[RMDB]
RNA sequence: GGGAACGACUCGAGUAGAGUCGAAAAUUACCAUUAAUGCAGUUAUUUUCUUCUUUAUCCAUAUUCGUUCUAGCUCUUCCUGUAAAUUUUGUCUCAUUUGAAAAUCUACAGCUCCUAAUGGUUCAUCCCGCUAUGGGCAUUUCGAUGCCCAUAGCGGAAAAGAAACAACAACAACAAC
Reactivity to 2A3 in 0.01 (KOAc 150mM, MgCl2 10mM, bicine 150mM(pH8.5), 24C), signal-to-noise 1, nucleotides 027 to 126: u090u000a110c000c000a000u150u170a070a250u250g030c070a050g030u140u110a050u000u020u000u010c000u060u010c050u060u110u020a060u080c000c060a030u000a080u290u150c000g010u000u000c010u020a000g010c000u000c020u000u010c020c000u010g130u070a080a260a080u050u110u090u000g130u090c110u030c030a130u020u050u080g060a020a060a030a030u010c020u020a170c050a070g000c050u020c030c000u000a020a020u000g070g010u030u000c010a020u090c000
Structure probing data (2A3) for a 177-nucleotide construct. The reactions ran in a buffer of 150 mM KOAc, 10 mM MgCl2 and 150 mM bicine (pH 8.5), at 24 C. Reactivities are given for positions 27 through 126.